[RMDB]
RNA sequence: GGGAACGACUCGAGUAGAGUCGAAAAACUCGUCCACCCCUCCUAUGCGGCCUGGGCAGACACCACGAACAACGCCCACGCGAUGAGCGUCUCCGGCGCGAUGCAAGCCGCCCGAUGGCGGGAACUCACCCCCGCCCGCGCCGCAGCACUCACCCGGAGUGAUGCGUAAUUUCGAUUACGCAUCACUAAAAGAAACAACAACAACAAC
Reactivity to DMS in 0.01 (KOAc 150mM, MgCl2 10mM, bicine 150mM(pH8.5), 24C), signal-to-noise 1, nucleotides 027 to 156: a110c020u000c070g030u000c030c040a080c030c000c010c020u000c070c030u000a090u000g000c030g030g010c040c060u010g050g000g010c040a070g000a170c030a110c000c060a110c030g050a090a110c050a060a070c030g040c000c000c040a000c070g000c030g010a050u000g020a170g010c000g040u020c010u000c060c000g020g020c010g000c010g020a110u000g000c020a090a090g020c030c030g030c000c030c090g030a150u000g050g020c020g040g020g030a030a090c090u000c090a210c030c030c000c010c020g000c030c010c010g040c090g030c000c000g000c080a060g020c020a060c060u020c020a100c020c010c000g000g020
Reactivity to 2A3 in 0.01 (KOAc 150mM, MgCl2 10mM, bicine 150mM(pH8.5), 24C), signal-to-noise 2, nucleotides 027 to 156: a000c060u090c080g070u060c020c000a060c000c000c010c000u010c000c010u090a060u070g020c030g030g000c030c000u060g010g010g000c020a020g020a060c060a050c030c060a060c100g110a170a010c060a030a040c060g020c030c010c010a000c000g000c010g050a110u230g010a020g000c020g040u050c020u060c070c030g030g000c010g010c000g050a020u070g040c030a050a030g000c010c010g020c000c030c020g130a070u120g020g000c020g010g000g010a080a050c050u050c160a090c000c000c000c000c000g000c000c000c000g010c000g000c000c000g000c000a000g010c010a020c000u050c030a050c000c030c000g010g010